An RNA of 207 nucleotides, treated with 2A3 and read out base by base. Values cover nucleotides 27 to 156. The reactions ran in a buffer of 150 mM KOAc, 10 mM MgCl2 and 150 mM bicine (pH 8.5), at 24 C.
RNA sequence: GGGAACGACUCGAGUAGAGUCGAAAAUGAGACAAACACGCUUCACAAUGUGCGGCAAAGAAACAUUGUUUAUGCAAAGGCACUUCGCAAUGUGUGCCCAAACAUUGCUUAUUCAAACACGCUUCACAAAAGAAUCAGUGGUUCGCCACUGAUUCAACUACCUCUGCUCCUUCGGGAGCAGAGGUAGAAAAGAAACAACAACAACAAC
Reactivity to 2A3 in 0.01 (KOAc 150mM, MgCl2 10mM, bicine 150mM(pH8.5), 24C), signal-to-noise 2, nucleotides 027 to 156: u140g020a020g050a040c080a020a090a000c050a020c070g030c000u000u010c000a000c000a000a030u000g010u000g000c010g060g000c090a150a180a000g060a000a080a000c000a000u000u000g110u030u080u070a160u160g010c040a030a080a050g060g000c000a020c110u040u030c100g000c020a020a010u040g000u000g040u070g040c050c030c000a010a040a000c010a020u000u020g010c000u130u080a150u170u180c100a040a070a070c060a020c050g130c010u070u070c110a040c000a160a120a050a010g010a000a010u010c000a000g000u000g000g050u040u060c290g050c040c000a000c000u000g000a000u000u000c000a000a000

It was measured as part of the RMDB library M2RFPK. For 2A3 the reverse transcriptase was SuperScript II with manganese.